Chemical mapping of a 177-nucleotide RNA with DMS and 2A3.
The RNA was probed in 150 mM KOAc, 10 mM MgCl2 and 150 mM bicine (pH 8.5) at 24 C.
DMS adducts were read by reverse transcription with MarathonRT.
The DMS profile rests on 842 reads.
It was measured as part of the RMDB library M2PK90.
For 2A3, 1,404 sequencing reads were counted.
Values cover nucleotides 27 to 126.
[RMDB]
RNA sequence: GGGAACGACUCGAGUAGAGUCGAAAAAUAAAUGAUGAGUUAACGCUCAACAAAGUAACGAAAGAUGGCGAUUCGGUACACAUGGAAACAUGCGCCAAACGGAUAAAUACACAGAAUCCGAAAAAAACCCACUAACUUAGUUCGCUAAGUUAGUGGGAAAAGAAACAACAACAACAAC
Reactivity to DMS in 0.01 (KOAc 150mM, MgCl2 10mM, bicine 150mM(pH8.5), 24C), signal-to-noise 1, nucleotides 027 to 126: a070u010a030a130a120u000g020a150u000g020a010g000u020u010a070a220c220g000c000u000c040a020a120c020a030a090a170g000u010a050a090c030g000a050a150a060g020a170u010g020g030c000g000a270u020u000c000g000g000u000a090c040a250c020a040u000g010g000a040a070a040c050a010u000g040c010g000c000c040a040a070a180c050g000g000a010u010a060a010a140u000a000c140a060c070a110g000a040a040u000c020c010g020a020a000a010a010a020a060a070
Reactivity to 2A3 in 0.01 (KOAc 150mM, MgCl2 10mM, bicine 150mM(pH8.5), 24C), signal-to-noise 1, nucleotides 027 to 126: a010u050a000a080a000u050g030a020u050g000a010g020u040u050a070a000c010g010c000u010c000a000a000c050a000a150a040g060u030a000a000c020g030a110a060a000g140a080u060g000g000c010g020a020u080u030c020g020g010u100a010c070a010c000a090u070g040g030a050a020a010c020a020u060g040c020g000c000c000a050a080a020c000g000g010a000u000a080a100a030u240a050c110a000c020a090g150a090a030u040c010c040g000a120a010a010a010a030a070a080